[RMDB]
An RNA of 177 nucleotides, treated with DMS and 2A3 and read out base by base.
The DMS profile rests on 7,172 reads.

RNA sequence: GGGAACGACUCGAGUAGAGUCGAAAACAAUAGACUAGCCGUAGUGGCGAAAAACGUCCUGAUAGGGUGCUGCAGAGGCCCACUACUAGGCUAGUAUAAAAAUCUCUGCAGCAUAAACGUCAACAAAGCAUGAUAAUUAGUUCGCUAAUUAUCAUGCAAAAGAAACAACAACAACAAC
Reactivity to DMS in 0.01 (KOAc 150mM, MgCl2 10mM, bicine 150mM(pH8.5), 24C), signal-to-noise 4, nucleotides 027 to 126: c050a120a130u060a080g000a020c000u000a010g010c000c000g020u010a020g010u000g000g020c280g020a050a130a030a080a130c160g000u000c020c020u000g020a130u050a140g010g000g010u000g000c000u000g020c000a020g000a000g020g030c300c000c020a000c010u000a000c030u060a130g020g000c020u000a000g000u000a010u000a000a010a010a010a050u010c010u000c000u020g000c020a000g000c010a020u010a010a110a120c090g000u000c140a070a060c150a090a080a120
Reactivity to 2A3 in 0.01 (KOAc 150mM, MgCl2 10mM, bicine 150mM(pH8.5), 24C), signal-to-noise 6, nucleotides 027 to 126: c010a020a070u150a130g190a080c010u000a000g000c000c000g030u010a000g000u000g000g020c030g160a120a010a010a000a010c060g100u090c020c030u050g030a100u150a140g220g000g010u050g000c000u000g010c000a000g000a000g030g040c030c010c010a010c000u000a000c010u070a130g000g000c000u010a000g020u010a000u000a000a000a000a000a000u060c000u000c000u000g000c000a000g000c010a000u040a040a080a000c030g130u130c060a060a030c030a100a200a020